[RMDB]
RNA sequence: GGGAACGACUCGAGUAGAGUCGAAAACAGAUGCCGUUCGCGGCAUCUGAAAGUGACGGUGAAAUAUGGCCAAGGUGCCAGCUACCACCGACACAGGGCGCAAAAGAGGAUUCUUCGGAAUCCUCAACCUAUAGUAAGUCUUCGGACUUACUAUAGGAAAAGAAACAACAACAACAAC
Reactivity to DMS in 0.01 (KOAc 150mM, MgCl2 10mM, bicine 150mM(pH8.5), 24C), signal-to-noise 8, nucleotides 027 to 126: c000a010g000a010u000g010c000c010g030u000u010c190g020c020g010g000c000a000u000c010u000g000a030a050a100g020u000g010a120c010g000g010u000g000a070a100a110u000a090u000g000g000c000c030a220a190g010g010u010g020c000c000a010g010c130u000a100c130c000a010c000c000g010a090c010a010c010a160g000g000g000c130g020c200a070a050a090a060g010a010g000g000a010u000u000c000u000u010c190g010g000a010a010u000c000c000u000c000a010a030
Reactivity to 2A3 in 0.01 (KOAc 150mM, MgCl2 10mM, bicine 150mM(pH8.5), 24C), signal-to-noise 8, nucleotides 027 to 126: c000a000g000a000u000g010c010c020g020u050u080c260g010c020g100g000c000a000u010c000u010g010a050a020a000g010u010g010a010c000g000g000u010g030a060a060a060u230a050u040g010g010c030c080a260a220g240g070u300g050c010c000a000g000c000u080a110c020c010a000c000c000g010a000c010a000c000a010g080g070g020c130g010c100a050a080a070a050g010a010g000g000a000u010u000c010u050u090c240g060g000a020a000u000c010c000u000c000a000a000